Structure probing data (DMS) for a 177-nucleotide construct.
[RMDB]
RNA sequence: GGGAACGACUCGAGUAGAGUCGAAAAUAGUCCAGGACCUAUAAUUGAUUACCACGUCUGGAUAGGAGAUUGUAUUGGUAAAGUUACUGCUGUAGACGUACAUGGAAAGGAAAUUAUGAGAAUGUGAAUUCAUCCCACACUUCGGUGUGGGAUGAAUAAAAGAAACAACAACAACAAC
Reactivity to DMS in 0.01 (KOAc 150mM, MgCl2 10mM, bicine 150mM(pH8.5), 24C), signal-to-noise 2, nucleotides 027 to 126: u000a120g010u010c020c000a080g020g020a170c060c060u000a060u010a050a100u010u040g010a280u010u010a060c040c000a030c130g010u000c040u000g030g000a030u000a050g010g020a120g020a080u020u000g030u000a080u000u010g010g040u040a040a070a080g000u010u000a110c040u000g000c030u000g040u020a040g020a060c160g010u000a030c100a060u000g000g000a080a060a070g010g010a070a060a060u000u000a060u000g030a090g030a050a060u000g010u000g010a110
For DMS the reverse transcriptase was MarathonRT. The RNA was probed in 150 mM KOAc, 10 mM MgCl2 and 150 mM bicine (pH 8.5) at 24 C.